[RMDB]
RNA sequence: GGGAACGACUCGAGUAGAGUCGAAAAAAAUUUGGAAAUCUUACCAAGAUAACCCUGAAAUGAUGUCAGUGCAAAGGGUGGUGAAUGAUGUAGCAUAUGAGACCACAAAUCUCGAUACAUCAAUGGAAUUGGAAAGGUGAUUCGUCACCUUUCCAAUAAAAGAAACAACAACAACAAC
Reactivity to DMS in 0.01 (KOAc 150mM, MgCl2 10mM, bicine 150mM(pH8.5), 24C), signal-to-noise 4, nucleotides 027 to 126: a070a030a070u000u000u010g010g000a150a120a050u010c080u020u000a150c010c030a040a080g000a110u000a060a060c030c010c020u000g010a090a060a060u010g020a110u000g010u010c080a090g020u000g010c110a030a090a060g010g000g020u000g000g010u000g010a080a080u010g000a000u010g000u000a020g000c140a150u010a130u010g010a030g040a010c040c030a080c300a080a060a300u000c010u010c000g030a120u000a010c010a010u000c010a010a100u000g010g010a110
Reactivity to 2A3 in 0.01 (KOAc 150mM, MgCl2 10mM, bicine 150mM(pH8.5), 24C), signal-to-noise 1, nucleotides 027 to 126: a000a000a040u110u010u030g000g020a050a180a140u010c050u120u070a090c020c040a020a000g030a200u070a000a060c060c000c000u090g140a050a100a110u090g030a040u040g140u250c090a040g090u050g080c030a060a070a000g050g000g010u000g030g060u140g070a130a180u070g030a000u000g000u040a060g000c070a010u100a140u300g000a000g000a010c000c030a050c110a190a090a030u010c030u010c000g000a030u000a010c030a020u030c000a000a010u110g060g000a030
Source information
Source: RMDB library OK2TRN, as collected in RNAgym. This 177-nucleotide RNA was probed chemically with DMS and 2A3. For DMS, 2,583 sequencing reads were counted. For 2A3 the reverse transcriptase was SuperScript II with manganese. DMS adducts were read by reverse transcription with MarathonRT. High DMS reactivity at an A or C suggests that its Watson-Crick edge is free. The RNA was probed in 150 mM KOAc, 10 mM MgCl2 and 150 mM bicine (pH 8.5) at 24 C.